[RMDB]
RNA sequence: GGGAACGACUCGAGUAGAGUCGAAAACUGGAGGACGUCACUGUCGGCCAGGCCGCUGUGGUGGACGACGAGAUAGUCCGGGUCGAUGCGGUCAACUAUGCCAGUGGCACAGUCACCCUGGCGCGCGGCUGUGCCGAUACCGUACCGGCCAAACACAAGUCAUUAAUACGUUCGCGUAUUAAUGACUAAAAGAAACAACAACAACAAC
Reactivity to 2A3 in 0.01 (KOAc 150mM, MgCl2 10mM, bicine 150mM(pH8.5), 24C), signal-to-noise 5, nucleotides 027 to 156: c020u040g080g030a040g010g010a030c020g010u030c020a040c220u150g020u020c000g010g030c020c000a080g120g080c000c030g140c240u300g130u300g090g020u030g040g020a030c010g010a010c010g010a010g010a100u050a070g010u000c020c040g000g000g020u000c000g020a020u040g010c000g000g000u060c100a070a060c080u170a090u300g140c050c060a080g030u180g030g000c010a030c010a020g010u020c000a040c030c020c050u090g140g040c050g000c060g000c000g080g000c030u030g010u020g000c000c010g010a020u040a010c000c000g000u000a010c000c020g010g000c000c000a040a150a000c140a010c030a060
Reactivity to DMS in 0.01 (KOAc 150mM, MgCl2 10mM, bicine 150mM(pH8.5), 24C), signal-to-noise 2, nucleotides 027 to 156: c040u000g030g020a150g000g020a040c020g000u000c090a160c080u020g070u000c000g040g000c060c040a120g020g040c030c030g030c070u000g070u010g000g060u000g020g000a090c020g010a060c010g000a090g020a160u000a050g030u010c010c000g010g020g060u000c010g060a030u000g000c000g000g100u000c040a100a090c080u000a130u000g000c050c020a280g060u010g040g000c000a050c010a040g040u000c020a060c020c020c020u000g000g010c040g070c100g000c000g010g010c010u010g040u000g010c010c030g000a060u000a020c020c030g000u000a030c020c000g000g020c020c000a050a020a080c060a070c080a160
Chemical mapping of a 207-nucleotide RNA with 2A3 and DMS. The DMS profile rests on 3,383 reads. The 2A3 profile rests on 3,393 reads. Conditions: 150 mM KOAc, 10 mM MgCl2 and 150 mM bicine (pH 8.5), 24 C.